Overview: The record gives the reactivity of an RNA of 177 nucleotides to DMS and 2A3. 2A3 adducts were read by reverse transcription with SuperScript II with manganese. For DMS, 766 sequencing reads were counted.

RNA sequence: GGGAACGACUCGAGUAGAGUCGAAAACAAUAGCGUUAUCCCUCUGCACUUCGGUAAUAUGAGGGCACAGUAAAUCCCGCAAGGAUGAGAAUGUGAUGUGGAAUGAGUAAAUCUAAGGUGAGGAGGCGUGAGUACCUUAGUUCGCUAAGGUACUCACAAAAGAAACAACAACAACAAC
Reactivity to DMS in 0.01 (KOAc 150mM, MgCl2 10mM, bicine 150mM(pH8.5), 24C), signal-to-noise 1, nucleotides 027 to 126: c100a120a080u010a120g020c050g040u000u000a190u010c030c000c000u000c060u000g010c070a010c020u010u020c170g060g000u010a060a160u000a130u030g010a030g010g000g010c120a010c040a010g000u000a050a140a100u000c000c000c010g000c160a120a210g000g030a060u000g040a000g000a040a110u000g010u000g000a030u010g040u000g000g000a060a060u010g010a080g020u000a060a040a030u000c060u000a080a050g020g020u020g000a070g030g010a050g010g000c180
Reactivity to 2A3 in 0.01 (KOAc 150mM, MgCl2 10mM, bicine 150mM(pH8.5), 24C), signal-to-noise 1, nucleotides 027 to 126: c020a030a130u130a150g080c040g030u030u100a110u110c000c000c010u020c010u040g000c010a000c040u020u030c150g130g000u020a020a010u060a080u280g020a030g000g000g000c010a020c010a010g080u080a040a000a050u030c000c020c010g000c040a050a040g030g040a000u030g020a000g000a020a000u020g010u010g020a030u080g030u040g050g010a160a070u050g000a070g060u130a020a090a010u000c070u050a060a060g090g000u040g050a040g030g020a010g000g040c050